[RMDB]
RNA sequence: GGGAACGACUCGAGUAGAGUCGAAAAUAGCUGCAACAUUAUUUGAGUAUCCUGAAAACGGGCUUUUCAGAAUGGUGUUGCCGUAUAAAAUUGUAGGAGUGCAUAGUGGCCAGUAUAGCAGGCAUUAGAGAGCUACAGAUGUUCGCAUCUGUAGCAAGUUCUACAUCCAGUUCGCUGGAUGUAGAACAAAAGAAACAACAACAACAAC
Reactivity to 2A3 in 0.01 (KOAc 150mM, MgCl2 10mM, bicine 150mM(pH8.5), 24C), signal-to-noise 2, nucleotides 027 to 156: u110a010g030c010u010g000c000a000a000c000a020u010u050a010u000u070u030g000a010g050u090a090u140c010c000u040g100a050a030a050a090c130g020g030g010c030u070u070u110u090c070a070g010a090a030u010g000g020u010g010u000u010g000c000c010g000u080a070u090a100a110a080a060u130u140g040u050a040g000g030a050g030u040g000c020a040u050a070g080u050g030g050c030c010a010g060u030a060u040a130g060c060a010g030g000c000a000u010u080a050g040a000g010a010g050c010u000a000c000a000g000a000u000g030u050u070c160g010c130a000u000c000u000g000u020a000g010c000a010a010
Reactivity to DMS in 0.01 (KOAc 150mM, MgCl2 10mM, bicine 150mM(pH8.5), 24C), signal-to-noise 1, nucleotides 027 to 156: u000a190g020c060u020g010c030a030a050c040a050u010u000a050u000u010u010g010a220g050u000a060u000c000c010u000g020a020a030a050a090c080g070g000g040c120u020u000u010u000c040a090g010a040a000u010g050g000u000g020u000u000g070c020c060g030u010a130u010a050a060a060a170u010u000g000u000a060g030g000a110g050u000g010c040a050u000a110g050u020g010g000c010c020a150g010u000a090u000a070g000c020a020g040g030c040a080u020u000a070g010a200g010a150g000c010u000a010c000a010g010a010u000g000u000u000c300g040c020a020u000c000u030g000u010a000g030c020a000a010
This 207-nucleotide RNA was probed chemically with 2A3 and DMS. 2A3 adducts were read by reverse transcription with SuperScript II with manganese. It was measured as part of the RMDB library M2RFPK.